[RMDB]
RNA sequence: GGGAACGACUCGAGUAGAGUCGAAAACUUCCGGAGCAGGACAGAAACCAGGUAAAUUAGCAUGUAAUAUCCUUCCCGUUCCUGUGCAGAUGUCUGAGGCUUCUUUCUCCUUUAGUCAAAUCUGAUUUGCUAUGAGAACAUUCGUGUUCUCAUAGCAAAAAGAAACAACAACAACAAC
Reactivity to 2A3 in 0.01 (KOAc 150mM, MgCl2 10mM, bicine 150mM(pH8.5), 24C), signal-to-noise 3, nucleotides 027 to 126: c030u080u020c010c030g020g000a040g000c060a010g010g030a010c000a030g070a040a040a000c000c030a010g040g020u090a060a200a130u070u090a100g060c090a040u080g070u160a050a050u050a140u240c030c020u030u000c010c000c030g010u040u020c000c010u020g100u110g000c000a020g010a060u000g010u020c010u050g060a060g060g020c030u030u000c000u060u070u010c090u040c000c000u080u120u100a060g010u100c060a080a010a150u020c000u040g070a270u050u000
Reactivity to DMS in 0.01 (KOAc 150mM, MgCl2 10mM, bicine 150mM(pH8.5), 24C), signal-to-noise 1, nucleotides 027 to 126: c230u000u010c040c000g030g000a260g010c150a140g000g000a060c050a030g000a190a220a160c020c030a090g040g020u000a000a060a100u000u020a050g030c000a060u010g000u090a090a050u000a070u000c030c000u090u000c000c000c000g010u000u000c000c000u070g070u000g000c010a140g000a070u000g000u000c020u080g030a080g000g010c000u000u000c110u000u000u000c040u000c120c000u000u000u000a060g000u040c160a030a090a130u000c000u000g000a050u000u000
Source: RMDB library RFM100, as collected in RNAgym. Chemical mapping of a 177-nucleotide RNA with 2A3 and DMS. The DMS profile rests on 879 reads. DMS adducts were read by reverse transcription with MarathonRT.